[RMDB]
RNA sequence: GGGAACGACUCGAGUAGAGUCGAAAACGCUGGGCACUGCGGAUGGAGUUCAACAGCCCACUGAAGCGCGCACGGUGGGACAUGAACCCGGAUGCAGUGCCUGUGCUGAAGCGCGCACGGCAACCGAAAGGUGCGGUCUCCCUCUUUCGAGAGGGAAGGAACAAAUAUGUUUCGACAUAUUUGUUCCAAAAGAAACAACAACAACAAC
Reactivity to DMS in 0.01 (KOAc 150mM, MgCl2 10mM, bicine 150mM(pH8.5), 24C), signal-to-noise 1, nucleotides 027 to 156: c010g030c020u020g000g020g080c000a050c000u010g010c000g000g030a300u000g000g010a090g010u000u000c040a110a080c140a190g050c010c000c000a040c030u000g000a100a060g000c030g030c010g010c040a300c030g000g000u000g020g030g020a060c030a180u020g000a020a020c000c020c000g010g010a300u020g000c010a020g000u010g020c000c020u000g020u020g010c010u020g000a090a020g000c020g030c030g000c010a300c020g010g000c000a060a100c010c000g020a080a100a150g020g000u000g010c000g010g000u000c100u000c010c010c000u000c000u010u000u000c280g000a030g000a060g010g060g040a010a040
Reactivity to 2A3 in 0.01 (KOAc 150mM, MgCl2 10mM, bicine 150mM(pH8.5), 24C), signal-to-noise 4, nucleotides 027 to 156: c010g000c010u030g000g000g000c010a000c000u010g000c020g020g030a100u210g060g020a300g050u020u000c040a120a090c070a250g080c000c000c000a010c010u040g020a190a030g010c000g000c000g000c010a010c000g020g000u010g010g020g130a220c050a160u220g010a000a020c010c000c030g000g010a030u110g000c000a000g000u000g000c000c000u000g010u000g000c000u010g010a110a050g000c010g000c000g000c010a030c020g010g000c010a030a000c010c000g030a080a040a030g030g000u010g000c000g010g060u020c050u020c010c010c010u000c010u040u080u130c280g100a030g000a000g040g010g000a010a110